[RMDB]
RNA sequence: GGGAACGACUCGAGUAGAGUCGAAAAGCGCAAAUCCACAAACGCCAACGAUGAGCGUUUGGCUGUAGCCGCUUAAGGCAACAGCCGGGGCCGCCUGAGCCCUGUUACCAAAGACGGCUGGCGGGGGUAAUUACUUAUUGCUUCGGCAAUAAGUAAACGAAAAAGUACGAUUCGUCGUACUUUUUCGAAAAGAAACAACAACAACAAC
Reactivity to DMS in 0.01 (KOAc 150mM, MgCl2 10mM, bicine 150mM(pH8.5), 24C), signal-to-noise 2, nucleotides 027 to 156: g010c020g030c040a050a130a050u000c040c030a110c020a020a100a040c010g020c000c000a120a180c170g040a140u000g000a290g000c020g000u000u000u000g030g030c020u010g010u000a020g030c000c020g010c300u000u000a100a250g050g030c010a030a030c000a040g020c040c000g000g010g000g020c060c030g010c060c020u010g000a190g000c010c020c020u000g010u000u000a100c030c010a070a190a140g000a090c300g010g040c040u000g010g000c000g010g000g040g040g040u000a050a070u000u000a000c000u000u000a010u000u000g010c000u000u010c300g060g010c000a020a010u000a000a000g000u000a010a000a180
Reactivity to 2A3 in 0.01 (KOAc 150mM, MgCl2 10mM, bicine 150mM(pH8.5), 24C), signal-to-noise 2, nucleotides 027 to 156: g080c050g000c030a050a050a070u040c040c040a060c070a110a120a010c030g000c010c000a080a040c120g130a140u120g020a050g020c000g000u000u000u090g000g000c010u000g000u020a050g000c000c010g040c190u280u200a130a120g000g000c010a020a010c000a010g000c000c000g000g000g000g000c010c080g010c000c010u020g020a000g010c000c000c010u010g050u040u060a030c020c020a010a040a020g010a010c010g000g030c030u080g050g040c010g040g000g000g000g010u050a100a100u060u010a020c000u000u000a000u010u000g010c000u030u030c170g070g010c000a000a000u000a010a000g000u000a000a000a010